[RMDB]
RNA sequence: GGGAACGACUCGAGUAGAGUCGAAAAGAAGAUUGAUUUUAGGUAAGAUGUAUCUCCAGCUAUUGAACGCGGGAAAGCCUUUCUCUUUCCUGCCCCAAAAACUGAUAUAGUUGGUCAUAAUUCUUGCAGACUAAUAAGACUUCGGUCUUAUUAGUCUAAAAGAAACAACAACAACAAC
Reactivity to DMS in 0.01 (KOAc 150mM, MgCl2 10mM, bicine 150mM(pH8.5), 24C), signal-to-noise 3, nucleotides 027 to 126: g000a110a070g000a130u000u010g010a110u000u000u010u000a050g010g000u000a020a020g000a050u000g000u000a030u010c050u000c000c000a010g000c010u000a030u010u000g010a150a060c240g010c000g020g010g000a000a000a020g020c300c100u010u000u010c090u000c000u000u000u000c000c000u000g000c000c060c030c080a030a070a070a070a090c210u000g010a110u010a010u000a010g020u000u000g010g000u000c050a050u010a090a130u000u000c000u000u010g010c300
Reactivity to 2A3 in 0.01 (KOAc 150mM, MgCl2 10mM, bicine 150mM(pH8.5), 24C), signal-to-noise 1, nucleotides 027 to 126: g080a030a000g080a070u050u180g070a080u070u140u160u170a060g020g070u050a050a030g010a100u170g050u200a070u060c030u000c020c000a000g000c000u010a000u020u090g030a080a060c080g020c000g000g000g000a000a000a000g000c050c000u100u290u070c130u030c000u000u000u010c030c000u000g030c000c000c000c000a180a270a030a010a020c050u050g060a010u040a000u010a050g010u000u010g020g000u000c010a070u100a240a040u030u000c000u030u010g030c020
Structure probing data (DMS and 2A3) for a 177-nucleotide construct. 2A3 is a SHAPE reagent: it acylates the 2'-hydroxyl of flexible nucleotides of all four kinds. The RNA was probed in 150 mM KOAc, 10 mM MgCl2 and 150 mM bicine (pH 8.5) at 24 C. Reactivities are given for positions 27 through 126.